Chemical mapping of a 207-nucleotide RNA with 2A3. The RNA was probed in 150 mM KOAc, 10 mM MgCl2 and 150 mM bicine (pH 8.5) at 24 C. Source: RMDB library OK3TST, as collected in RNAgym. For 2A3 the reverse transcriptase was SuperScript II with manganese. For 2A3, 696 sequencing reads were counted.
[RMDB]
RNA sequence: GGGAACGACUCGAGUAGAGUCGAAAACUGCCUUAGAAGAGGGGAAGAAAAUGUACAUACUGUAACAUUUAAACAUCUGGUCUAAAACCACAUCACUGUAACUGAAUAAAGUUAUGGAGGUAUUCUUCCCAGGUGUGCAUAUAAAAAGGAUUUUGGACGGUCAGUCAUUAUUCGUAAUGACUGACCGAAAAGAAACAACAACAACAAC
Reactivity to 2A3 in 0.01 (KOAc 150mM, MgCl2 10mM, bicine 150mM(pH8.5), 24C), signal-to-noise 2, nucleotides 027 to 156: c000u060g000c000c020u040u060a030g020a160a010g020a040g040g010g070g010a100a030g060a000a070a020a020u090g010u020a040c010a120u170a170c100u110g020u070a140a020c030a060u050u100u180a100a150a010c010a010u010c000u010g000g020u020c070u150a020a040a100a070c000c010a040c000a050u000c010a000c020u040g030u190a160a020c020u020g140a090a170u180a090a220a010g000u000u000a050u010g030g030a110g040g020u000a070u120u050c020u050u090c010c000c000a000g000g000u000g000u020g000c040a080u080a010u140a130a090a030a030a050g090g020a070u040u070u050u070g040g000a010